Background
The data come from the RNA Mapping Database (RMDB), library M2RFPK. An RNA of 207 nucleotides, treated with DMS and 2A3 and read out base by base. Conditions: 150 mM KOAc, 10 mM MgCl2 and 150 mM bicine (pH 8.5), 24 C.
[RMDB]
RNA sequence: GGGAACGACUCGAGUAGAGUCGAAAACGACCUUAAACAGUUCUGGAGGUGCUCUGAAUGGAGUGCUCUACUGAGAUUAUAAAAUAGAAGGUAAGCUAUUAUCUCUUACAACAGGGCAGGGCUUGUUAAAAGCCUUUCAGUUUCGACUGAAAGGCAACUGAGUAUGAAAGUUCGCUUUCAUACUCAGAAAAGAAACAACAACAACAAC
Reactivity to DMS in 0.01 (KOAc 150mM, MgCl2 10mM, bicine 150mM(pH8.5), 24C), signal-to-noise 1, nucleotides 027 to 156: c010g020a260c010c020u010u020a100a130a150c040a070g000u000u000c030u000g000g000a120g040g030u000g030c040u000c000u000g000a170a130u030g000g000a090g090u000g000c030u000c070u010a060c070u010g000a130g000a090u010u000a170u020a110a090a090a090u000a040g000a050a070g030g020u030a030a150g010c060u010a070u010u000a040u000c020u000c000u000u000a100c050a060a090c070a090g000g000g020c010a060g000g010g010c050u010u000g020u000u010a020a060a050a250g000c000c000u000u010u010c010a000g010u000u000u000c280g010a080c000u000g000a000a010a000g040g060c010a000a000
Reactivity to 2A3 in 0.01 (KOAc 150mM, MgCl2 10mM, bicine 150mM(pH8.5), 24C), signal-to-noise 3, nucleotides 027 to 156: c080g030a060c020c010u090u190a090a110a020c010a050g010u080u070c060u120g080g020a020g050g040u030g000c030u000c020u050g210a130a080u260g030g010a020g010u040g010c000u020c010u110a080c020u030g000a010g020a050u050u090a060u170a210a130a060a030u070a020g080a100a020g120g040u070a040a000g020c010u030a030u110u020a030u100c020u020c020u060u060a070c010a130a040c020a040g020g030g000c010a000g020g010g010c020u030u050g020u050u070a050a140a040a010g000c000c000u000u000u000c000a010g000u000u040u130c160g070a020c010u000g010a000a000a000g000g000c000a000a010